[RMDB]
RNA sequence: GGGAACGACUCGAGUAGAGUCGAAAAAACGCUACUGUGAAUUGGUUGAAUUAAAGAUUAAAACGAAACCGGGAUGGAUCAUGAAGGCGCCAUAUGUUGAUGCACCGUUAAAACUCGCUGGUAUUAAUGCAUUUAUGUAUGCUGGUAGGUAUAAAAAAUGACACUAGUUUUUCGAAACUAGUGUCAUAAAAGAAACAACAACAACAAC
Reactivity to DMS in 0.01 (KOAc 150mM, MgCl2 10mM, bicine 150mM(pH8.5), 24C), signal-to-noise 2, nucleotides 027 to 156: a040a060c030g020c020u000a070c040u020g020u020g000a110a100u000u000g030g000u000u010g000a070a150u000u000a100a060a160g010a200u010u000a060a070a050a050c060g000a060a020a030c070c050g000g070g030a070u000g020g010a060u020c040a070u000g010a090a080g010g020c020g010c010c020a040u000a090u000g010u010u010g020a100u000g010c010a060c040c020g030u000u010a030a060a070a100c090u000c060g030c070u000g020g020u000a070u000u010a070a110u000g020c000a090u020u000u000a050u040g010u000a080u000g020c030u000g020g030u000a010g020g010u000a050u030a000a040a060a050a110
Reactivity to 2A3 in 0.01 (KOAc 150mM, MgCl2 10mM, bicine 150mM(pH8.5), 24C), signal-to-noise 2, nucleotides 027 to 156: a000a020c040g020c090u120a070c020u020g000u020g130a150a120u100u090g040g020u070u030g020a030a080u110u100a180a100a010g080a100u130u180a120a100a030a080c060g040a080a070a020c020c060g010g000g010a040u030g030g010a020u070c000a010u090g090a060a020g050g020c010g020c040c010a020u050a010u210g050u040u030g010a020u050g030c010a010c020c040g060u070u100a050a020a070a110c030u050c090g060c060u010g000g040u050a060u040u140a080a040u100g020c000a010u000u110u060a060u100g050u040a020u070g020c020u000g000g060u040a020g040g030u080a030u230a080a100a030a160a010